This 177-nucleotide RNA was probed chemically with DMS and 2A3. It was measured as part of the RMDB libraries RFM100 and RFMREP. For 2A3 the reverse transcriptase was SuperScript II with manganese.
[RMDB]
RNA sequence: GGGAACGACUCGAGUAGAGUCGAAAAUUUCAGUUGUGUUAUGGAACCAAUUUUUCUCCCACUCCCAUACUUACCACCCAAUUAAUGGCACAGCUAGAACACUCUGACAAAUUGGAUGAGUAUUCCAAGUAGAAGCAAUUUUCGAAUUGCUUCUACUAAAAGAAACAACAACAACAAC
Reactivity to DMS in 0.01 (KOAc 150mM, MgCl2 10mM, bicine 150mM(pH8.5), 24C), signal-to-noise 6, nucleotides 027 to 126: u020u020u000c040a100g010u010u000g010u000g000u000u010a060u010g010g000a090a110c070c050a050a050u010u010u020u010u010c030u000c010c000c020a120c070u000c020c030c010a060u010a050c080u010u010a050c080c040a050c040c010c010a060a080u000u010a080a070u010g010g010c020a020c030a050g000c030u000a090g010a070a060c120a050c030u010c040u010g010a190c080a030a050a100u010u010g010g000a090u000g000a080g010u000a110u000u000c020c040a060
Reactivity to 2A3 in 0.01 (KOAc 150mM, MgCl2 10mM, bicine 150mM(pH8.5), 24C), signal-to-noise 9, nucleotides 027 to 126: u050u080u040c030a020g010u020u020g020u020g040u090u080a090u140g070g040a040a040c040c010a060a050u040u050u010u090u040c060u030c020c010c000a040c020u040c020c010c000a040u030a100c030u040u030a050c010c020a040c020c020c010a070a140u150u150a130a080u090g020g000c020a010c020a040g020c010u020a040g010a030a020c030a010c040u040c020u020g060a030c050a030a200a220u140u120g030g000a020u020g010a030g070u080a100u050u010c030c010a030